An RNA of 207 nucleotides, treated with DMS and 2A3 and read out base by base. Values cover nucleotides 27 to 156. The reactions ran in a buffer of 150 mM KOAc, 10 mM MgCl2 and 150 mM bicine (pH 8.5), at 24 C. For 2A3, 1,802 sequencing reads were counted.

RNA sequence: GGGAACGACUCGAGUAGAGUCGAAAAAGCCACCGCUACGGCGGUGGCAAGUAGAAAAGUUGGUGCUUAGACCACGCCCUCUACCGUAAUAAUAGAUAAAUCGGCGAGUAUCAGUACGCUGAUACAAAAAACACUCACACGUUCGCGUGUGAGUGAACAUGUAAAUUUUCUUCGGAAAAUUUACAUGAAAAGAAACAACAACAACAAC
Reactivity to DMS in 0.01 (KOAc 150mM, MgCl2 10mM, bicine 150mM(pH8.5), 24C), signal-to-noise 1, nucleotides 027 to 156: a180g020c000c000a010c010c010g060c000u000a060c250g090g060c010g020g060u000g010g060c000a010a010g010u010a110g030a070a080a110a250g010u010u030g020g000u000g000c040u010u020a110g010a110c020c030a090c010g030c030c000c040u030c030u000a030c000c000g060u000a120a100u000a120a160u000a090g010a060u000a010a100a030u000c110g040g000c000g000a160g010u000a040u000c000a020g010u000a110c300g040c010u000g000a010u010a040c010a000a050a040a070a040a060c010a030c000u000c010a020c000a000c000g020u000u010c300g040c040g070u010g000u010g010a020g030u000g000a010a080
Reactivity to 2A3 in 0.01 (KOAc 150mM, MgCl2 10mM, bicine 150mM(pH8.5), 24C), signal-to-noise 3, nucleotides 027 to 156: a000g000c000c000a010c000c020g080c020u030a050c220g150g000c000g000g010u010g000g000c000a000a010g010u040a010g050a030a050a000a000g030u060u040g020g020u080g090c190u220u130a040g030a080c000c000a010c010g010c000c010c000u000c010u010a020c020c020g040u010a060a040u080a170a030u120a180g180a080u150a060a130a050u100c040g050g010c040g040a030g010u010a010u060c020a000g020u040a030c180g020c080u020g000a000u010a020c040a000a160a020a000a000a000c000a000c000u000c000a000c000a010c010g010u040u070c190g010c010g070u010g000u010g000a000g000u000g000a000a010